[RMDB]
RNA sequence: GGGAACGACUCGAGUAGAGUCGAAAAUACAAGAGUAAAGUGCAUGCGCUUUGGGACAGUGAGGAAAAUAGUGUUCACAAAGCCCAUACACUUUCACCCUUUAGGAGACGUGCGAACUUCGGUUCGCCCCUGCUAUAUGGUUCGCCAUAUAGCAGGGAAAAGAAACAACAACAACAAC
Reactivity to 2A3 in 0.01 (KOAc 150mM, MgCl2 10mM, bicine 150mM(pH8.5), 24C), signal-to-noise 3, nucleotides 027 to 126: u220a020c080a010a020g040a000g060u100a020a020a010g000u010g000c020a000u010g010c010g010c040u010u000u000g010g010g010a000c020a110g110u080g190a190g090g300a090a080a100a030u190a110g110u040g000u020u000c040a040c010a300a010a010g010c000c010c000a010u030a010c010a000c000u000u000u020c010a010c000c000c000u040u070u080a170g080g040a130g010a060c090g100u090g030c000g000a000a000c000u030u060c200g050g000u010u010c000g020c000
Reactivity to DMS in 0.01 (KOAc 150mM, MgCl2 10mM, bicine 150mM(pH8.5), 24C), signal-to-noise 4, nucleotides 027 to 126: u010a090c200a040a020g010a000g010u000a010a010a000g020u000g010c030a010u000g020c300g010c000u000u000u000g010g000g000a000c000a030g010u010g010a140g010g010a080a120a090a120u010a030g000u000g010u000u000c000a090c010a000a020a010g000c000c090c000a010u000a020c000a000c000u000u000u000c140a020c000c000c000u000u000u010a110g010g000a080g000a060c160g020u000g010c000g010a010a010c000u000u000c180g030g010u010u000c000g000c000
The record gives the reactivity of an RNA of 177 nucleotides to 2A3 and DMS. For 2A3 the reverse transcriptase was SuperScript II with manganese. The 2A3 profile rests on 4,801 reads. The reactions ran in a buffer of 150 mM KOAc, 10 mM MgCl2 and 150 mM bicine (pH 8.5), at 24 C.